Chemical mapping of a 177-nucleotide RNA with 2A3 and DMS. It was measured as part of the RMDB library M2PK90. The 2A3 profile rests on 1,913 reads. Values are in units of 0.01, from 0 to 300, in steps of 10. The reactions ran in a buffer of 150 mM KOAc, 10 mM MgCl2 and 150 mM bicine (pH 8.5), at 24 C.

RNA sequence: GGGAACGACUCGAGUAGAGUCGAAAAGGAAACAAGUCAAGUAACUGCUCCAAUCAGUUUAAUAUCAGUGACGUCCUCUAUCCGAGGACAAUAUAUUAAAUGGAUAAAAGGUGCAGGAGAAAAAAAAACAUUCUAUGAGUUUCGACUCAUAGAAUGUAAAAGAAACAACAACAACAAC
Reactivity to 2A3 in 0.01 (KOAc 150mM, MgCl2 10mM, bicine 150mM(pH8.5), 24C), signal-to-noise 2, nucleotides 027 to 126: g070g010a010a050a090c050a070a000g110u130c050a060a060g040u050a130a060c000u010g010c000u000c000c010a000a020u010c010a010g030u000u000u030a010a010u010a020u070c070a060g120u050g220a030c100g020u000c000c010u030c040u130a220u100c100c040g010a000g000g000a000c000a000a000u020a000u000a000u000u020a000a000a010u010g010g010a000u060a110a200a070a060g000g000u010g000c000a000g200g010a050g050a030a090a030a030a020a000a000a000
Reactivity to DMS in 0.01 (KOAc 150mM, MgCl2 10mM, bicine 150mM(pH8.5), 24C), signal-to-noise 3, nucleotides 027 to 126: g030g010a080a100a080c070a100a100g000u000c140a070a100g000u020a100a150c010u010g000c010u010c010c000a070a030u000c020a120g010u020u000u000a000a010u000a000u010c160a120g010u010g030a120c200g000u000c000c000u000c000u000a100u010c300c140g000a010g000g000a010c000a030a020u000a030u010a020u000u000a010a000a000u020g000g010a030u000a030a080a100a130g000g000u000g000c010a020g020g010a120g010a030a030a000a010a060a080a060a110